[RMDB]
RNA sequence: GGGAACGACUCGAGUAGAGUCGAAAACAUCUCGAGGUUAAAGGUGUCAUAGUAUAUGAUUCGAUCUGCGUGCCAAUGUCAAAGUUACUGGCAAAGGCGCAUAAGCGAUUCUGUGAGGGCCAGUAGAAAACAUAUUUGACUUCGGUCAGAUAUGUUUAAAAGAAACAACAACAACAAC
Reactivity to DMS in 0.01 (KOAc 150mM, MgCl2 10mM, bicine 150mM(pH8.5), 24C), signal-to-noise 9, nucleotides 027 to 126: c150a100u000c020u000c030g010a110g010g010u000u010a060a100a090g010g010u000g010u000c020a040u000a080g010u010a080u010a070u010g010a070u000u000c040g010a050u010c090u000g010c140g010u000g010c010c010a020a300u000g000u000c020a020a070a160g010u010u010a100c250u000g010g000c010a020a030a300g000g010c010g010c020a040u010a080a070g010c030g000a040u000u000c030u000g010u000g010a080g010g000g010c020c030a050g010u010a080g000a090
Reactivity to 2A3 in 0.01 (KOAc 150mM, MgCl2 10mM, bicine 150mM(pH8.5), 24C), signal-to-noise 9, nucleotides 027 to 126: c030a080u030c020u010c040g070a100g030g060u120u190a120a070a030g040g010u030g020u020c020a040u040a070g100u070a110u030a040u280g080a070u060u050c020g030a080u020c020u050g020c020g040u050g030c010c000a030a030u030g000u020c010a030a050a090g090u170u120a100c050u020g000g000c000a020a010a020g000g010c010g000c000a010u030a170a030g010c000g010a010u080u000c020u040g050u020g040a050g010g090g010c000c020a020g030u050a020g140a020